[RMDB]
RNA sequence: GGGAACGACUCGAGUAGAGUCGAAAAGAUAUGGAGUAGAACUACGAGAACUUAAGGUCGAAGAACCAUAAUUUAAUCGGAAACGAUUAAAUUAUGGGGAGACCUGUAGACUCGCUACUCCUAAGUCGAUGGUAUAAACGUUCGCGUUUAUACCAUCAAAAGAAACAACAACAACAAC
Reactivity to DMS in 0.01 (KOAc 150mM, MgCl2 10mM, bicine 150mM(pH8.5), 24C), signal-to-noise 2, nucleotides 027 to 126: g010a050u010a300u020g030g000a020g000u000a000g020a130a090c140u010a300c000g010a020g010a070a090c000u000u010a140a020g010g040u000c000g020a090a150g000a160a220c000c000a000u000a000a000u000u000u000a000a000u000c000g000g010a160a080a190c020g010a010u000u000a000a020a010u000u000a000u000g000g000g000g000a030g010a000c000c000u000g000u000a010g010a280c000u000c000g020c000u000a000c010u000c000c000u010a000a060g000u000c060
Reactivity to 2A3 in 0.01 (KOAc 150mM, MgCl2 10mM, bicine 150mM(pH8.5), 24C), signal-to-noise 2, nucleotides 027 to 126: g040a020u150a090u240g000g000a000g020u010a030g040a250a120c170u300a080c300g040a030g050a270a000c050u190u130a150a020g050g010u020c030g200a300a020g000a060a060c020c020a010u000a020a000u000u000u010a010a000u000c000g000g000a040a170a020c000g000a010u000u000a000a000a000u060u020a000u000g000g000g000g010a020g000a000c000c020u000g020u010a010g000a040c000u000c000g000c000u030a000c030u000c020c000u050a130a000g050u010c090

Conditions: 150 mM KOAc, 10 mM MgCl2 and 150 mM bicine (pH 8.5), 24 C. Chemical mapping of a 177-nucleotide RNA with DMS and 2A3. For DMS, 1,877 sequencing reads were counted. 2A3 adducts were read by reverse transcription with SuperScript II with manganese. For DMS the reverse transcriptase was MarathonRT. Source: RMDB library TTRINS, as collected in RNAgym. Values cover nucleotides 27 to 126.